[RMDB]
RNA sequence: GGGAACGACUCGAGUAGAGUCGAAAAGGGGUCGAGCGCGUCUUUCGCCUGUGGAGCUUGGAUUUAUGGAGCUGAAGCCUCCACGGCUCCAUUGUCAGCUCCACCUGCGAAAGACCGCUCGACGGAGGCACCCAAAAGGGAUGGUUCGCCAUCCCAACUAUGAAACACUCUUCGGAGUGUUUCAUAGAAAAGAAACAACAACAACAAC
Reactivity to 2A3 in 0.01 (KOAc 150mM, MgCl2 10mM, bicine 150mM(pH8.5), 24C), signal-to-noise 3, nucleotides 027 to 156: g060g010g010g010u010c010g000a010g010c050g000c150g000u000c010u010u000u010c010g010c010c050u010g020u020g000g010a010g000c080u170u210g160g020a070u240u300u120a000u080g000g000a000g000c000u020g040a170a030g050c040c050u050c050c050a040c010g000g000c000u000c000c000a000u000u020g000u010c020a010g000c010u000c000c000a000c010c010u010g000c010g000a010a000a000g000a000c000c000g010c010u010c000g000a000c010g000g000a010g010g030c060a070c010c020c020a030a060a020a100g000g010g010a010u020g010g020u060u120c240g030c070c000a000u010c000c000c010a000a000
This 207-nucleotide RNA was probed chemically with 2A3.
For 2A3 the reverse transcriptase was SuperScript II with manganese.
It was measured as part of the RMDB library RNAMAK.
Conditions: 150 mM KOAc, 10 mM MgCl2 and 150 mM bicine (pH 8.5), 24 C.